[RMDB]
RNA sequence: GGGAACGACUCGAGUAGAGUCGAAAAGGGGUCAGCUUUUGACGAUCGGGAGUAUGAGGCAUCGAUCUAUGGCUGAAGCCUCCACGGCCAUAGGGAGCCUUGAAACCGAUCGAUAAGCUGACGGAGGCACCCAAAUCCCACCCUUCGGGGUGGGAAACGAUACAUGCAGCUUCGGCUGCAUGUAUCGAAAAGAAACAACAACAACAAC
Reactivity to 2A3 in 0.01 (KOAc 150mM, MgCl2 10mM, bicine 150mM(pH8.5), 24C), signal-to-noise 2, nucleotides 027 to 156: g080g040g070g000u000c000a000g020c020u180u120u230u210g250a120c100g010a030u010c000g000g050g020a060g070u180a110u300g050a000g030g000c030a060u300c220g020a000u000c000u000a000u000g000g000c020u040g040a080a010g020c010c000u000c000c010a010c010g010g000c000c000a000u010a000g010g010g010a000g000c030c000u010u000g030a050a000a010c020c000g000a010u000c010g000a000u010a040a000g000c000u000g000a000c000g000g000a000g020g000c010a060c000c000c010a080a080a040u040c000c000c000a000c000c010c010u010u120c280g040g000g000g000u000g000g000g000a020a010a010
About this RNA
The record gives the reactivity of an RNA of 207 nucleotides to 2A3. It was measured as part of the RMDB library RNAMAK. The reactions ran in a buffer of 150 mM KOAc, 10 mM MgCl2 and 150 mM bicine (pH 8.5), at 24 C. Reactivities are given for positions 27 through 156. The 2A3 profile rests on 1,735 reads.